[RMDB]
RNA sequence: GGGAACGACUCGAGUAGAGUCGAAAAUGGCCGGCCGCGCGUGAGGCGCUGAUCCGGCCGUGAUCGCUAGUACACGUAGGCGCCGCGAUGUAGUACGGCGCGAUCGCGCGCGGCCCGUACGCGUGGCGUGCUGUAUCUGCUUCGGCAGAUACAGCACAAAAGAAACAACAACAACAAC
Reactivity to 2A3 in 0.01 (KOAc 150mM, MgCl2 10mM, bicine 150mM(pH8.5), 24C), signal-to-noise 2, nucleotides 027 to 126: u130g110g000c000c010g010g000c000c010g000c000g000c010g030u070g050a040g090g080c020g000c000u020g020a050u020c030c000g010g020c030c010g000u010g020a090u050c020g000c160u060a030g090u160a070c080a000c100g120u090a120g170g000c060g010c010c000g000c080g020a010u130g080u220a140g070u070a030c050g000g020c020g000c000g020a130u000c030g000c010g000c010g010c040g000g000c000c020c000g030u060a020c020g000c040g090u080g060g000c030
Reactivity to DMS in 0.01 (KOAc 150mM, MgCl2 10mM, bicine 150mM(pH8.5), 24C), signal-to-noise 3, nucleotides 027 to 126: u000g010g000c000c090g000g010c140c110g010c000g020c010g040u010g010a100g000g010c010g010c010u000g000a080u010c020c010g010g000c040c010g000u000g000a100u000c040g020c060u000a130g020u000a110c100a090c050g020u010a130g000g000c060g010c050c030g000c070g000a060u010g010u020a090g030u000a120c030g000g000c060g010c000g020a060u000c050g020c050g040c020g010c020g010g010c050c020c070g000u010a060c020g000c030g000u010g010g020c080